[RMDB]
RNA sequence: GGGAACGACUCGAGUAGAGUCGAAAAACACGCACGCCAACCGGUCCAGAAAUUAGACAUCAAAAAUAUGACAUUAAUUGCACACAGAUGCAUUCAAAAGCAAUUUCAGAAAAUGUCUUGAAAAACCCUGAAUAAAUCGCGUUUUUGGUUUGAAUGCCAGACUGUACGUAUUCGUACGUACAGUCUGAAAAGAAACAACAACAACAAC
Reactivity to 2A3 in 0.01 (KOAc 150mM, MgCl2 10mM, bicine 150mM(pH8.5), 24C), signal-to-noise 2, nucleotides 027 to 156: a000c040a000c070g020c010a000c050g010c010c010a090a070c030c030g020g010u020c010c040a040g090a050a220a010u080u080a060g010a040c020a020u130c070a040a090a110a000a030u140a100u170g010a020c000a000u040u100a050a050u060u040g020c060a040c010a010c030a100g140a180u050g000c010a020u050u050c030a020a020a030a130g020c000a010a020u050u090u160c030a010g050a030a070a030a030u000g000u000c000u050u130g050a080a070a060a040a060c000c050c000u010g070a040a000u100a130a060a050u130c080g010c060g040u000u000u000u050u070g050g000u050u030u020g020a040a010u040g000c010
Reactivity to DMS in 0.01 (KOAc 150mM, MgCl2 10mM, bicine 150mM(pH8.5), 24C), signal-to-noise 2, nucleotides 027 to 156: a080c020a110c040g030c060a040c090g020c040c030a010a150c080c030g000g000u010c020c020a060g030a110a080a180u000u020a080g000a040c040a100u030c010a040a110a120a120a140u000a210u000g010a080c060a080u000u000a070a090u000u000g020c040a070c030a150c160a180g030a170u010g010c010a060u010u000c030a030a050a090a080g000c010a030a060u000u010u000c060a220g000a040a100a010a030u000g010u000c020u000u000g000a050a130a130a050a110c030c050c000u010g010a090a130u000a010a100a050u000c030g040c030g030u010u000u000u000u000g020g000u000u010u010g000a040a020u010g010c030

Overview:
An RNA of 207 nucleotides, treated with 2A3 and DMS and read out base by base. For DMS, 1,792 sequencing reads were counted. Conditions: 150 mM KOAc, 10 mM MgCl2 and 150 mM bicine (pH 8.5), 24 C. DMS adducts were read by reverse transcription with MarathonRT. 2A3 adducts were read by reverse transcription with SuperScript II with manganese. The 2A3 profile rests on 1,188 reads.